[RMDB]
An RNA of 177 nucleotides, treated with DMS and read out base by base. DMS adducts were read by reverse transcription with MarathonRT. It was measured as part of the RMDB library OK2TST.
RNA sequence: GGGAACGACUCGAGUAGAGUCGAAAAAGCAACCACAGGGCAAUGCUUUGUUCCAGGGUCUGCAAAGCACUGUUAUUUGAAUCUCAACUGCCGGAUAGGCUUUUGGUCAUUUAGGAUCUGGUGACCAUCCUAAGUAGUGAUUCGUCACUACUUAGGAAAAAGAAACAACAACAACAAC
Reactivity to DMS in 0.01 (KOAc 150mM, MgCl2 10mM, bicine 150mM(pH8.5), 24C), signal-to-noise 8, nucleotides 027 to 126: a070g020c060a050a100c130c070a120c120a090g010g010g000c050a080a080u000g000c020u000u000u000g010u010u010c090c050a090g010g000g000u000c030u000g010c020a030a050a060g010c010a030c030u000g010u000u000a100u000u010u000g000a090a120u000c040u000c030a080a110c140u000g010c010c010g010g020a150u000a140g000g010c020u000u010u010u000g000g000u000c020a030u000u010u010a070g000g000a060u000c050u000g000g010u010g000a050c020c020a130